Chemical mapping of a 177-nucleotide RNA with DMS and 2A3.
The DMS profile rests on 30,985 reads.
DMS adducts were read by reverse transcription with MarathonRT.
DMS (dimethyl sulfate) methylates the pairing face of unpaired adenines and cytosines.
Source: RMDB library OK1LIB, as collected in RNAgym.

RNA sequence: GGGAACGACUCGAGUAGAGUCGAAAAGGCUUGAAUUUCGGCGACUGCCUGUCCUAUGCACUGGCGAUCGAUCGACGUGAGCCGCUGCUGUGGAAGGGCAACGACUUUGGGCACACCGGCGUCCAAAAUUAUAAGAUGCAUUCGUGCAUCUUAUAAUAAAAGAAACAACAACAACAAC
Reactivity to DMS in 0.01 (KOAc 150mM, MgCl2 10mM, bicine 150mM(pH8.5), 24C), signal-to-noise 9, nucleotides 027 to 126: g000g010c020u010u010g010a080a090u020u010u010c040g000g010c030g010a110c120u010g000c020c000u020g010u010c000c060u000a130u020g000c070a020c020u000g010g010c000g000a140u000c030g010a190u040c200g010a180c130g000u000g010a300g010c000c000g010c260u000g000c030u000g000u010g000g010a050a120g000g000g010c030a040a050c070g000a060c190u010u010u010g000g000g000c020a060c040a150c040c050g000g010c090g000u000c010c020a020a020a070
Reactivity to 2A3 in 0.01 (KOAc 150mM, MgCl2 10mM, bicine 150mM(pH8.5), 24C), signal-to-noise 9, nucleotides 027 to 126: g060g020c040u090u110g070a110a080u130u110u100c060g030g000c050g070a090c090u050g000c000c000u040g070u030c010c010u050a070u140g010c020a010c030u060g000g000c000g050a060u020c000g030a080u100c090g170a150c060g060u030g020a010g010c000c010g010c020u010g000c000u020g010u040g060g040a080a080g040g000g000c010a020a020c030g070a030c010u040u060u070g010g010g010c020a020c010a020c060c040g050g010c030g020u010c010c010a020a100a010